[RMDB]
RNA sequence: GGGAACGACUCGAGUAGAGUCGAAAAACACUCGACGCCAACUUCUCAAAUCAUCGAACAGGGCGCUGAAGUGUUCGGUGAUCGGGGUCGAACAUCCACCAGAAUUCUCCUUGUGGCCGGCGGAUCCAUGAUACUUCCAGUUCGCUGGAAGUAUCAUAAAAGAAACAACAACAACAAC
Reactivity to DMS in 0.01 (KOAc 150mM, MgCl2 10mM, bicine 150mM(pH8.5), 24C), signal-to-noise 3, nucleotides 027 to 126: a060c140a060c040u000c010g030a050c050g010c000c020a120a120c200u000u000c040u010c060a110a140a020u000c040a010u000c010g000a040a030c050a070g020g010g020c090g020c100u020g010a100a110g010u000g010u000u000c030g030g020u000g010a020u000c100g000g000g000g010u000c010g000a030a110c130a090u000c030c020a050c060c060a090g010a130a100u000u000c030u000c040c030u000u000g020u000g010g030c060c020g010g000c030g010g010a070u010c080c080
Reactivity to 2A3 in 0.01 (KOAc 150mM, MgCl2 10mM, bicine 150mM(pH8.5), 24C), signal-to-noise 2, nucleotides 027 to 126: a020c050a020c030u020c010g030a020c020g170c090c030a130a110c070u110u050c040u010c040a080a100a040u020c010a000u020c020g010a010a010c010a040g070g110g070c030g010c100u080g050a090a050g110u030g010u010u020c000g000g010u000g010a030u030c040g010g000g000g020u000c030g000a010a020c030a060u060c010c020a020c010c020a040g080a110a140u110u040c030u050c040c000u030u040g020u040g060g000c040c000g010g030c030g000g030a010u000c040c030